[RMDB]
RNA sequence: GGGAACGACUCGAGUAGAGUCGAAAAAGGCUGUGAGAGCUCCACAGCGCCAGUUUGCCCAUCUGUACACUGGGGUCUGUUGAAGGCAGUCCCCUCUGUGAUAUCUCUGGCUGUCAGAGCUCAGAUGGCGUAGUUAGAUGUUCGCAUCUAACUACGCAAAAGAAACAACAACAACAAC
Reactivity to 2A3 in 0.01 (KOAc 150mM, MgCl2 10mM, bicine 150mM(pH8.5), 24C), signal-to-noise 3, nucleotides 027 to 126: a000g190g000c010u010g020u010g030a150g010a010g130c020u000c020c000a000c010a000g020c030g040c030c000a000g010u070u170u150g090c000c000c020a040u020c100u100g120u060a020c020a010c020u020g030g010g000g010u010c020u010g100u050u110g190a120a090g170g000c000a000g000u020c000c000c000c000u000c010u010g030u000g040a050u050a120u140c070u010c000u050g060g000c040u040g100u070c060a060g010a000g000c000u020c000a010g080a100u200g110
Reactivity to DMS in 0.01 (KOAc 150mM, MgCl2 10mM, bicine 150mM(pH8.5), 24C), signal-to-noise 2, nucleotides 027 to 126: a070g000g000c010u010g000u000g010a230g000a040g000c060u000c040c010a020c000a000g000c040g000c010c010a030g000u000u000u020g010c050c020c010a100u000c110u010g010u010a050c000a000c020u000g010g000g000g000u000c010u000g010u000u010g050a180a190g000g010c000a020g000u000c000c010c000c000u000c020u000g020u000g000a080u010a060u030c040u010c020u000g010g000c110u000g000u010c150a100g000a020g040c050u000c010a090g000a110u010g010